[RMDB]
Structure probing data (2A3) for a 207-nucleotide construct.

RNA sequence: GGGAACGACUCGAGUAGAGUCGAAAAAUGUGCGGCAAAGAAACAUUGUUUAUGCAAAGGCACUUCGCAAUGUGUGCUCAAACAUUGCUUAUUCAAAGACGCUUCACAAUGUGCGACAAAGAAACAUAAAACGUUUAGUACUUCGGUACUAAACGAACCAGAGGAAAGGCUUCGGCCUUUCCUCUGGAAAAGAAACAACAACAACAAC
Reactivity to 2A3 in 0.01 (KOAc 150mM, MgCl2 10mM, bicine 150mM(pH8.5), 24C), signal-to-noise 1, nucleotides 027 to 156: a000u100g010u020g120c040g050g000c020a090a040a000g080a010a100a050c000a010u000u030g060u010u100u070a130u120g130c040a070a030a030g100g000c010a010c000u090u070c000g010c050a010a040u020g000u020g010u020g040c020u000c150a060a040a000c000a030u010u000g000c000u040u090a060u020u110c020a040a060a030g030a010c010g000c000u000u050c050a000c000a080a060u090g000u010g020c060g070a040c090a000a110a010g020a020a120a000c010a030u140a060a110a090a000c000g000u010u000u000a000g000u000a000c010u020u090c230g040g000u000a000c010u020a000a000a000c030g010a000a020
The reactions ran in a buffer of 150 mM KOAc, 10 mM MgCl2 and 150 mM bicine (pH 8.5), at 24 C.